RNA sequence: GGGAACGACUCGAGUAGAGUCGAAAAGAAAGAAAAAGGAUGAUGAAUACAAUUGGUACAUAAAUUUAGUUGUGAAACUCACAUGUUGAAAAAAGUAGAAUACCGAUGAAUAUCAAAGCUGACUUAAUUCUUUUUUAUUGUUCGCAAUAAAAAAGAAAAAAGAAACAACAACAACAAC
Reactivity to DMS in 0.01 (KOAc 150mM, MgCl2 10mM, bicine 150mM(pH8.5), 24C), signal-to-noise 3, nucleotides 027 to 126: g000a120a100a050g000a050a050a080a100a060g030g000a090u010g010a130u000g000a070a050u020a090c090a130a040u000u010g000g010u000a040c050a080u010a040a080a080u020u000u000a090g010u000u010g020u000g000a090a110a160c210u010c050a000c060a050u010g020u010u010g010a000a070a020a080a030a070g000u000a090g000a140a130u010a080c030c020g000a020u000g000a050a070u010a040u000c030a010a120a090g020c070u000g010a080c040u000u010a020a170
Reactivity to 2A3 in 0.01 (KOAc 150mM, MgCl2 10mM, bicine 150mM(pH8.5), 24C), signal-to-noise 3, nucleotides 027 to 126: g030a020a060a000g110a030a080a000a020a000g110g000a050u070g020a010u040g040a140a080u130a100c050a060a090u040u040g000g000u000a040c000a090u170a110a300a100u150u180u080a060g070u040u030g000u010g040a070a010a040c010u080c040a010c020a060u160g050u160u150g120a030a040a050a050a040a030g030u060a060g020a190a010u010a060c010c040g020a030u010g050a080a000u080a040u150c040a060a020a020g000c020u020g070a080c000u050u010a020a070